The data come from the RNA Mapping Database (RMDB), libraries RFM100 and RFMREP. The record gives the reactivity of an RNA of 177 nucleotides to 2A3 and DMS. Values are in units of 0.01, from 0 to 300, in steps of 10. The RNA was probed in 150 mM KOAc, 10 mM MgCl2 and 150 mM bicine (pH 8.5) at 24 C. 2A3 adducts were read by reverse transcription with SuperScript II with manganese. Reactivities are given for positions 27 through 126.
RNA sequence: GGGAACGACUCGAGUAGAGUCGAAAAGUGGUAUCCGGAUGGUAAUGGUAAACCGUUCUGCUCAGGUUCAGACUCCGGCAGGCCUGACGGAUACUGAGUCCAAAUGUCGUUAUCAGAUGAGUGACCAUAGACUGCGAAUUUUCGAAUUCGCAGUCUAAAAAGAAACAACAACAACAAC
Reactivity to 2A3 in 0.01 (KOAc 150mM, MgCl2 10mM, bicine 150mM(pH8.5), 24C), signal-to-noise 3, nucleotides 027 to 126: g150u090g000g000u000a000u010c010c010g030g000a020u060g020g050u170a170a000u120g020g100u090a070a140a190c040c010g050u060u040c000u000g010c030u030c170a100g000g020u120u090c030a050g050a130c060u020c020c010g020g030c000a000g000g000c000c000u010g040a010c000g010g010a010u010a020c000u000g010a000g070u010c000c020a040a000a100u230g000u040c030g040u050u050a080u090c030a040g100a180u170g080a120g130u070g030a050c000c030a070
Reactivity to DMS in 0.01 (KOAc 150mM, MgCl2 10mM, bicine 150mM(pH8.5), 24C), signal-to-noise 2, nucleotides 027 to 126: g000u060g000g010u000a000u000c010c010g000g020a220u010g020g050u000a070a050u020g000g010u020a080a190a090c060c000g000u000u030c010u000g040c010u040c160a110g060g050u040u000c100a170g010a090c130u010c030c060g010g000c040a050g000g010c040c020u000g040a300c000g000g000a020u000a000c010u000g000a160g020u000c010c030a060a060a100u040g000u000c030g000u030u000a080u010c040a110g010a070u000g010a080g010u000g030a100c060c000a220